Structure probing data (DMS and 2A3) for a 177-nucleotide construct. The 2A3 profile rests on 6,545 reads.
[RMDB]
RNA sequence: GGGAACGACUCGAGUAGAGUCGAAAAACUAGGAGCGCACAUCUCUCUAAGACUGUACGACAGUCUGUCUCUCUAGCACGCUUGUUCAACGAGAGAGAGAGUGCGUUGGAACAAGUGUGCAACGAAACUCCACUCAAGAUUUCGAUCUUGAGUGGAGAAAAGAAACAACAACAACAAC
Reactivity to DMS in 0.01 (KOAc 150mM, MgCl2 10mM, bicine 150mM(pH8.5), 24C), signal-to-noise 3, nucleotides 027 to 126: a140c060u000a050g010g020a110g000c030g010c050a010c010a160u000c020u000c010u000c020u000a150a030g000a020c010u000g010u000a110c210g000a210c090a010g000u000c000u010g000u000c050u010c040u010c110u010a210g020c010a000c000g030c010u000u000g020u010u000c020a060a060c150g000a090g020a060g000a050g010a050g010a040g020u000g000c010g030u000u000g000g010a030a000c000a010a020g030u010g000u000g000c030a060a050c250g000a090a090a110
Reactivity to 2A3 in 0.01 (KOAc 150mM, MgCl2 10mM, bicine 150mM(pH8.5), 24C), signal-to-noise 4, nucleotides 027 to 126: a010c090u100a080g030g090a070g080c040g030c030a030c020a210u010c020u000c010u000c010u030a050a020g010a010c010u040g050u130a110c130g120a070c130a000g010u000c010u020g020u000c090u010c010u000c050u060a020g010c000a000c010g010c000u010u020g010u020u020c040a090a060c060g020a030g020a010g000a010g010a000g000a020g200u060g030c000g010u020u050g080g010a010a000c000a000a000g000u000g000u010g000c010a010a010c020g010a040a020a010